[RMDB]
RNA sequence: GGGAACGACUCGAGUAGAGUCGAAAAAAGUACUUGUCGUCAAAAUGGAAAGAAAUGGAUGUAUCUAGAACUAAAAUACGUCUAGAUACAUCCAUUUCUAUGACAAAUAAUUCCGGACGGAGGGAGUGUACUAACAGUACUUCGGUACUGUUAGUACAAAAGAAACAACAACAACAAC
Reactivity to DMS in 0.01 (KOAc 150mM, MgCl2 10mM, bicine 150mM(pH8.5), 24C), signal-to-noise 4, nucleotides 027 to 126: a050a050g030u000a020c050u000u000g010u000c010g000u000c060a100a040a080a120u040g010g020a050a090a050g000a000a010a000u010g000g010a010u000g020u000a010u000c000u000a010g010a050a040c120u020a070a100a090a130u010a090c300g000u000c000u000a000g010a020u000a010c010a000u000c020c000a000u000u000u000c010u000a060u010g010a060c100a030a080a050u010a050a130u000u000c030c010g000g000a060c070g010g000a030g000g000g000a100g000u000
Reactivity to 2A3 in 0.01 (KOAc 150mM, MgCl2 10mM, bicine 150mM(pH8.5), 24C), signal-to-noise 4, nucleotides 027 to 126: a000a000g090u050a030c030u060u070g030u080c010g020u000c020a030a040a080a260u200g040g020a040a110a060g000a000a000a000u000g000g000a000u000g000u010a000u000c000u000a000g020a070a100c050u150a090a040a110a170u210a060c040g000u000c000u000a000g000a000u000a000c000a010u000c000c010a010u000u000u000c010u010a000u000g000a000c000a000a020a000u060a000a020u060u030c020c000g040g000a020c060g010g030a020g030g020g020a050g040u040
Chemical mapping of a 177-nucleotide RNA with DMS and 2A3. Values cover nucleotides 27 to 126. 2A3 adducts were read by reverse transcription with SuperScript II with manganese. It was measured as part of the RMDB libraries RFM100 and RFMREP. The RNA was probed in 150 mM KOAc, 10 mM MgCl2 and 150 mM bicine (pH 8.5) at 24 C. DMS adducts were read by reverse transcription with MarathonRT.